Conditions: 150 mM KOAc, 10 mM MgCl2 and 150 mM bicine (pH 8.5), 24 C. Structure probing data (2A3) for a 207-nucleotide construct. 2A3 adducts were read by reverse transcription with SuperScript II with manganese. The 2A3 profile rests on 899 reads. Values are in units of 0.01, from 0 to 300, in steps of 10. High 2A3 reactivity points to a flexible backbone, as in loops and unpaired stretches.
[RMDB]
RNA sequence: GGGAACGACUCGAGUAGAGUCGAAAAAGCUACCAAAUGACCAUGAUCGAGACUAAGAAGGAAGUUCUCGAACUGUUCUACUCCGAUCCUGACGCAACCGCAGCCGCAGUCAAGAUCACAGGUAAGCAGGCAAAGCACGAGACCUACGUUCUUGACGUCCUCGGAUGGACUUCGGUCCAUCCGAGGAAAAAGAAACAACAACAACAAC
Reactivity to 2A3 in 0.01 (KOAc 150mM, MgCl2 10mM, bicine 150mM(pH8.5), 24C), signal-to-noise 2, nucleotides 027 to 156: a000g060c050u080a060c000c000a000a000a240u220g010a040c040c020a080u190g030a090u070c010g000a000g010a030c070u130a110a090g100a070a060g260g050a070a030g060u160u010c000u000c000g000a020a050c020u020g050u050u000c040u030a010c030u030c090c050g030a030u010c000c000u090g040a060c040g000c020a000a050c070c090g060c090a110g040c000c050g020c060a030g000u000c000a000a050g000a040u060c050a040c000a060g040g000u050a010a100g020c040a040g070g040c070a090a140a000g050c060a050c130g070a050g020a050c010c000u020a050c120g050u010u010c030u000u030g030a040c020g070